An RNA of 177 nucleotides, treated with 2A3 and DMS and read out base by base. For 2A3 the reverse transcriptase was SuperScript II with manganese. Conditions: 150 mM KOAc, 10 mM MgCl2 and 150 mM bicine (pH 8.5), 24 C. Source: RMDB libraries RFM100 and RFMREP, as collected in RNAgym.

[RMDB]
RNA sequence: GGGAACGACUCGAGUAGAGUCGAAAAGCUCUGUAAUGGGAUGGGAUCCGAAGCCCCAUUGAGGGAUAAUACAGGCUCUCCCAUCCAACUCCUAUUCCAACACGUCCUCGUCGUACAGAGUGGUAACUGUGUGUGACUUAUUCGUAAGUCACACACAAAAAGAAACAACAACAACAAC
Reactivity to 2A3 in 0.01 (KOAc 150mM, MgCl2 10mM, bicine 150mM(pH8.5), 24C), signal-to-noise 6, nucleotides 027 to 126: g000c000u000c020u040g080u060a100a120u180g170g020g010a000u000g000g010g010a020u150c010c010g060a070a020g050c000c000c030c020a100u150u240g070a300g030g000g010a020u040a130a030u150a160c100a050g010g000c000u010c000u000c000c010c000a000u000c000c000a000a000c010u010c030c000u020a080u090u100c040c010a030a010c040a020c100g060u060c010c010u090c000g070u040c020g000u020a010c010a010g020a010g000u050g020g040u070a120a030c050
Reactivity to DMS in 0.01 (KOAc 150mM, MgCl2 10mM, bicine 150mM(pH8.5), 24C), signal-to-noise 3, nucleotides 027 to 126: g020c000u010c020u010g000u000a060a070u020g020g020g030a020u010g010g000g020a020u030c030c010g000a070a120g010c010c000c000c010a290u040u020g000a100g000g000g010a050u010a110a050u040a060c170a300g010g000c040u000c030u000c000c000c000a000u010c000c020a050a060c070u030c000c020u000a140u020u010c050c050a110a090c120a070c090g000u000c020c010u000c070g000u030c070g000u020a030c040a010g020a000g010u000g000g000u010a080a070c160